Description: This 177-nucleotide RNA was probed chemically with 2A3 and DMS. For DMS, 2,578 sequencing reads were counted. For DMS the reverse transcriptase was MarathonRT. 2A3 adducts were read by reverse transcription with SuperScript II with manganese. The reactions ran in a buffer of 150 mM KOAc, 10 mM MgCl2 and 150 mM bicine (pH 8.5), at 24 C. High DMS reactivity at an A or C suggests that its Watson-Crick edge is free.
RNA sequence: GGGAACGACUCGAGUAGAGUCGAAAAGAUAUGGAUGAAGGGAGGCUCCCGUUGAAAUCGGAAACGAUGGAGGGAGCUCCCGUAUCAUCCUAAGUCAAAGCUUGUCACGGUUCGCCGUGACAAGCAAGAUGGUUCUAUGGUUCGCCAUAGAACCAUCAAAAGAAACAACAACAACAAC
Reactivity to 2A3 in 0.01 (KOAc 150mM, MgCl2 10mM, bicine 150mM(pH8.5), 24C), signal-to-noise 2, nucleotides 027 to 126: g010a040u090a030u210g000g000a010u020g010a080a060g060g010g030a050g180g180c010u010c000c000c010g030u130u030g000a000a000a020u000c000g020g000a070a080a040c030g000a020u010g030g040a020g000g000g000a000g020c000u020c010c010c000g000u010a030u010c010a010u020c000c000u000a130a000g030u040c080a170a060a000g010c000u010u000g020u020c000a020c020g000g100u060u100c300g070c160c010g010u000g010a010c000a000a000g010c000a000a000
Reactivity to DMS in 0.01 (KOAc 150mM, MgCl2 10mM, bicine 150mM(pH8.5), 24C), signal-to-noise 2, nucleotides 027 to 126: g000a030u000a300u010g000g010a010u010g010a080a140g010g000g000a020g030g030c010u000c000c000c000g000u010u010g000a120a140a010u000c010g000g010a160a100a190c020g000a020u000g000g000a100g000g030g000a020g020c000u000c000c000c000g010u010a020u000c000a010u010c000c000u010a010a140g010u010c030a060a100a120g010c000u000u000g000u000c000a010c010g000g000u000u010c300g030c000c000g040u000g030a000c000a000a000g020c000a010a030